The record gives the reactivity of an RNA of 207 nucleotides to 2A3.
The RNA was probed in 150 mM KOAc, 10 mM MgCl2 and 150 mM bicine (pH 8.5) at 24 C.
2A3 adducts were read by reverse transcription with SuperScript II with manganese.

RNA sequence: GGGAACGACUCGAGUAGAGUCGAAAAGCGUACUACUGAGAGGGUAACUACCCACCGCUAUAUGUGCUCUUUCUCCCAAAUAGGAGAAAGACCCUAUAGCGAGGUUACGGAACUCUCAGUAUCGCAAAAUCACCGGUGUGUUCGCACACCGGUGAAAACUUCUAUGACACUUCGGUGUCAUAGAAGUAAAAGAAACAACAACAACAAC
Reactivity to 2A3 in 0.01 (KOAc 150mM, MgCl2 10mM, bicine 150mM(pH8.5), 24C), signal-to-noise 2, nucleotides 027 to 156: g010c000g030u060a040c030u000a010c000u030g000a010g000a000g020g080g020u060a020a040c040u060a080c050c030c080a110c060c000g000c000u000a000u010a020u070g120u120g050c080u000c000u010u000u020c040u050c020c020c030a210a300a190u270a080g000g000a000g000a000a000a000g000a010c000c000c000u000a000u000a000g000c000g010a000g000g000u020u010a020c060g060g160a130a070c000u010c010u020c000a000g000u000a000u020c000g000c000a000a010a000a180u050c020a000c000c000g020g000u000g000u000g000u010u110c180g050c130a000c000a010c000c000g000g000u000g000a000a000a000